Source information
This 177-nucleotide RNA was probed chemically with 2A3 and DMS. The DMS profile rests on 2,798 reads. In probing experiments dimethyl sulfate is read out at A N1 and C N3, which are open when not base-paired. The RNA was probed in 150 mM KOAc, 10 mM MgCl2 and 150 mM bicine (pH 8.5) at 24 C. 2A3 adducts were read by reverse transcription with SuperScript II with manganese. It was measured as part of the RMDB library OK1LIB.
RNA sequence: GGGAACGACUCGAGUAGAGUCGAAAAGAGGUUCAACGCGGCGCCAGCAUCGAGCUGCACUGCAGCCAUUCGUUCGCGCCCGCGAAUGGAGAGUCUUUGGAUGCGAAGCUGCGUUCCAUUCGGGUGACAAAAUCGGGAGGUUCGCCUCCCGAUUUUGAAAAGAAACAACAACAACAAC
Reactivity to 2A3 in 0.01 (KOAc 150mM, MgCl2 10mM, bicine 150mM(pH8.5), 24C), signal-to-noise 2, nucleotides 027 to 126: g150a020g080g000u060u170c080a020a020c000g000c010g030g070c080g090c080c070a020g000c000a000u010c000g050a040g020c050u060g000c080a140c270u260g000c030a020g000c000c000a020u030u020c040g010u010u050c040g000c000g010c030c040c010g000c000g000a000a010u040g020g010a110g000a050g060u100c060u170u100u180g130g010a040u020g030c020g050a050a010g040c040u030g020c020g000u030u040c000c000a040u090u120c080g040g000g040u050g000a050
Reactivity to DMS in 0.01 (KOAc 150mM, MgCl2 10mM, bicine 150mM(pH8.5), 24C), signal-to-noise 2, nucleotides 027 to 126: g000a150g000g000u000u030c120a020a030c000g060c000g000g000c020g000c130c070a300g010c000a010u010c010g020a150g010c010u030g000c030a080c120u060g050c030a040g000c000c050a060u010u010c000g010u010u000c040g020c030g000c100c070c160g000c000g010a000a020u000g000g000a080g000a170g010u010c080u040u010u030g010g010a030u000g000c010g040a080a300g010c020u000g000c010g010u000u010c020c040a120u010u010c060g000g000g000u000g010a200